This 177-nucleotide RNA was probed chemically with DMS and 2A3.
Reactivities are given for positions 27 through 126.
It was measured as part of the RMDB library OK1LIB.
The RNA was probed in 150 mM KOAc, 10 mM MgCl2 and 150 mM bicine (pH 8.5) at 24 C.
Reactivities are rounded to 0.1 and cut off at 0 and 3.

RNA sequence: GGGAACGACUCGAGUAGAGUCGAAAAUGACAGCAACGAAGAUGCCGUUGCUUGCAUGGAACUUAUCCUGUGGAAAGUUAAGGAAGAAGCGAAGGUGUAAUAAAAGAGCGAUUAACUUCUGAAAAUCCGCUGAAGAGAGUUUCGACUCUCUUCAGCGAAAAGAAACAACAACAACAAC
Reactivity to DMS in 0.01 (KOAc 150mM, MgCl2 10mM, bicine 150mM(pH8.5), 24C), signal-to-noise 2, nucleotides 027 to 126: u000g030a070c060a040g000c020a000a000c010g000a150a130g020a050u030g010c140c020g020u000u000g000c010u040u000g020c010a000u000g000g020a160a140c200u030u010a040u010c010c000u030g000u010g000g000a050a090a080g000u000u040a060a080g000g010a050a020g010a060a030g000c100g020a040a110g030g010u000g040u010a050a060u010a040a090a090a090g000a140g000c000g010a060u010u010a110a080c050u000u000c030u000g010a070a080a110a130u030c060
Reactivity to 2A3 in 0.01 (KOAc 150mM, MgCl2 10mM, bicine 150mM(pH8.5), 24C), signal-to-noise 3, nucleotides 027 to 126: u080g060a060c000a020g000c000a000a000c030g020a180a070g140a160u300g150c080c010g000u000u000g000c000u000u210g000c010a000u000g050g000a030a000c020u080u070a110u210c000c030u060g010u140g060g030a040a060a090g000u050u170a000a100g020g040a000a160g000a120a000g030c110g070a010a120g120g020u140g010u040a090a140u090a140a110a040a020g070a000g020c010g000a000u070u040a070a020c000u020u030c000u000g070a020a000a000a080u110c040